[RMDB]
The data come from the RNA Mapping Database (RMDB), library OK1LIB. The record gives the reactivity of an RNA of 177 nucleotides to 2A3. For 2A3 the reverse transcriptase was SuperScript II with manganese. The reactions ran in a buffer of 150 mM KOAc, 10 mM MgCl2 and 150 mM bicine (pH 8.5), at 24 C.

RNA sequence: GGGAACGACUCGAGUAGAGUCGAAAAGCCAUCUUCGGACCCCUUUGGAUUCUUCAAGCCAGUUUGCUUAAAGUCCCCUACUUCGUGCGCGUUCAAGGCCUUCUCCGGAUCUGCGCGCUAGCGCGGAGGGGUAGUUGAACUUCGGUUCAACUACCCCAAAAGAAACAACAACAACAAC
Reactivity to 2A3 in 0.01 (KOAc 150mM, MgCl2 10mM, bicine 150mM(pH8.5), 24C), signal-to-noise 1, nucleotides 027 to 126: g020c000c000a090u020c080u030u070c000g090g030a110c010c000c000c000u010u050u040g070g000a120u140u030c060u090u020c010a010a080g000c000c010a050g070u090u120u110g050c030u050u160a110a120a120g060u110c000c000c000c000u030a070c000u030u060c040g030u050g080c060g000c000g090u080u090c080a070a000g050g000c010c010u060u000c100u030c000c040g050g000a110u000c000u030g000c020g020c000g000c040u080a010g000c090g000c000g010g020a030